[RMDB]
RNA sequence: GGGAACGACUCGAGUAGAGUCGAAAAGAUAUGGAGGACGAAGUGCUUUUGACGCAGUUGUGUCGGAAACGACACAAUCUGCGAUAAGCACCGUCCUCCUAAGUCAAAACUACGCUUCGGCGUAGAACUUUUUGAUUGAGUUCGCUCAAUCAAAAAGAAAAGAAACAACAACAACAAC
Reactivity to 2A3 in 0.01 (KOAc 150mM, MgCl2 10mM, bicine 150mM(pH8.5), 24C), signal-to-noise 3, nucleotides 027 to 126: g010a010u070a020u150g000g010a000g000g010a010c020g050a300a180g030u000g010c020u110u170u260u300g220a190c090g040c010a020g010u020u000g010u000g000u010c000g010g000a020a030a030c000g000a000c010a000c000a000a020u050c010u000g000c000g010a010u020a010a010g020c010a000c000c020g000u000c000c000u000c000c000u000a000a010g030u010c000a010a010a040a090c010u010a000c000g010c010u050u100c300g200g000c000g000u010a010g000a010a010
Reactivity to DMS in 0.01 (KOAc 150mM, MgCl2 10mM, bicine 150mM(pH8.5), 24C), signal-to-noise 3, nucleotides 027 to 126: g010a030u000a300u010g020g000a010g040g000a010c000g010a160a150g030u000g000c000u000u000u000u000g010a210c080g030c000a010g000u020u000g020u000g000u000c000g010g010a090a080a170c010g010a020c000a020c000a000a010u020c010u000g010c000g020a040u010a010a010g020c000a020c000c010g000u000c000c000u010c000c000u000a000a080g000u010c010a110a060a120a180c010u000a000c010g020c000u000u020c270g030g010c000g010u000a000g000a090a150